Structure probing data (DMS and 2A3) for a 177-nucleotide construct. For DMS, 1,206 sequencing reads were counted. For 2A3, 1,183 sequencing reads were counted. Values cover nucleotides 27 to 126.

RNA sequence: GGGAACGACUCGAGUAGAGUCGAAAACGAUGUAAUGCGCUUUGUACGAAAGAUUUCUCUGCGACAUUAAUUUGGGGCAGAUGGGCAGUUGUGAUUCAAUGUCAAUUGAAUAGCUCAACAAUCAUCUCAUCAAUCCAAAGUUCGCUUUGGAUUGAUGAAAAGAAACAACAACAACAAC
Reactivity to DMS in 0.01 (KOAc 150mM, MgCl2 10mM, bicine 150mM(pH8.5), 24C), signal-to-noise 2, nucleotides 027 to 126: c040g010a040u010g010u000a040a080u000g010c050g000c040u000u000u000g010u000a080c130g000a100a090a150g010a090u000u000u000c020u000c010u000g000c010g010a090c040a040u000u000a050a100u010u010u010g020g000g020g010c130a110g010a010u000g020g010g010c140a170g010u010u000g000u000g020a050u000u000c030a010a000u000g010u010c240a040a060u010u000g000a040a020u010a120g010c020u000c020a010a020c070a050a140u010c040a050u010c020u010
Reactivity to 2A3 in 0.01 (KOAc 150mM, MgCl2 10mM, bicine 150mM(pH8.5), 24C), signal-to-noise 1, nucleotides 027 to 126: c020g010a030u150g000u130a030a050u050g010c010g000c000u060u020u070g040u100a070c040g070a050a130a060g090a080u000u150u010c040u000c010u000g000c000g180a100c030a000u080u140a090a050u120u070u110g040g000g060g000c010a030g010a060u010g000g000g040c050a080g060u000u000g070u000g020a020u000u030c000a000a020u030g150u150c070a030a050u010u000g010a040a020u020a050g080c030u010c010a000a030c010a020a030u050c020a080u000c020u010